Background
This 177-nucleotide RNA was probed chemically with DMS and 2A3. 2A3 adducts were read by reverse transcription with SuperScript II with manganese.
RNA sequence: GGGAACGACUCGAGUAGAGUCGAAAAGAUAUGGAUCCAUCAGAGCGAAGAACAUACGGGAUCGGAAACGAUCUUAUGGGAGCUCGAUGGAUCCUAAGUCAAAGGACCGAAGUUCGCUUCGGUCCAACCUUGUAGUCUCGUUCGCGAGACUACAAGGAAAAGAAACAACAACAACAAC
Reactivity to DMS in 0.01 (KOAc 150mM, MgCl2 10mM, bicine 150mM(pH8.5), 24C), signal-to-noise 3, nucleotides 027 to 126: g000a030u000a010u020g010g000a020u000c000c000a010u000c000a100g030a010g050c010g000a150a170g010a210a220c010a010u000a030c300g000g000g000a000u000c000g010g000a000a020a010c010g010a010u000c000u000u000a010u000g000g040g000a020g050c000u000c020g000a010u000g000g010a010u000c010c000u000a010a080g000u000c000a120a180a220g010g010a010c000c000g020a020a030g000u000u000c300g020c000u010u000c010g020g000u000c000c010a020a010
Reactivity to 2A3 in 0.01 (KOAc 150mM, MgCl2 10mM, bicine 150mM(pH8.5), 24C), signal-to-noise 2, nucleotides 027 to 126: g010a000u010a000u030g000g010a000u010c000c000a000u000c090a080g000a010g020c050g190a300a020g010a090a000c000a000u060a040c130g080g020g020a010u010c000g010g000a010a010a000c000g020a000u000c010u000u020a000u010g010g040g020a020g000c000u030c010g010a000u000g040g000a010u000c000c010u000a000a010g010u000c020a000a040a250g000g000a000c010c000g010a010a000g020u070u290c300g020c220u000u000c000g000g000u030c000c000a000a010